[RMDB]
RNA sequence: GGGAACGACUCGAGUAGAGUCGAAAAGCGAGAUCGACAACCCGUCGCUGAUCACCGCCAACACGGCUUGAUACCGCUGUUCUGCCACACUCAACUCCUUCAUCGAAGGAGUGUCAAGGAUCAGCCGCCGUCAUAUGUCGUUCGCGACAUAUGACGGAAAAGAAACAACAACAACAAC
Reactivity to 2A3 in 0.01 (KOAc 150mM, MgCl2 10mM, bicine 150mM(pH8.5), 24C), signal-to-noise 1, nucleotides 027 to 126: g050c000g030a040g010a190u070c020g070a030c000a060a060c020c020c000g060u120c090g010c000u010g030a010u000c010a000c060c060g010c050c020a040a010c050a040c050g010g010c000u020u140g060a060u110a120c000c030g000c100u020g030u060u060c030u110g080c030c010a050c000a030c020u110c020a010a080c000u050c020c000u040u020c020a270u110c230g010a000a000g000g000a000g000u000g000u010c030a040a050g030g000a030u010c000a020g020c040c030g050
Reactivity to DMS in 0.01 (KOAc 150mM, MgCl2 10mM, bicine 150mM(pH8.5), 24C), signal-to-noise 2, nucleotides 027 to 126: g020c030g000a050g010a040u000c050g010a070c140a090a140c100c060c010g000u020c080g000c020u020g030a040u000c050a110c080c080g000c050c250a050a100c140a110c020g000g000c000u000u000g000a050u010a080c050c030g020c140u000g020u000u010c060u000g010c100c100a040c040a130c050u000c100a120a040c000u000c000c000u030u000c040a160u000c220g010a020a020g000g000a030g010u000g000u010c070a050a100g020g000a030u000c030a030g020c020c130g030
Source information
An RNA of 177 nucleotides, treated with 2A3 and DMS and read out base by base. The RNA was probed in 150 mM KOAc, 10 mM MgCl2 and 150 mM bicine (pH 8.5) at 24 C. For DMS the reverse transcriptase was MarathonRT. Values cover nucleotides 27 to 126.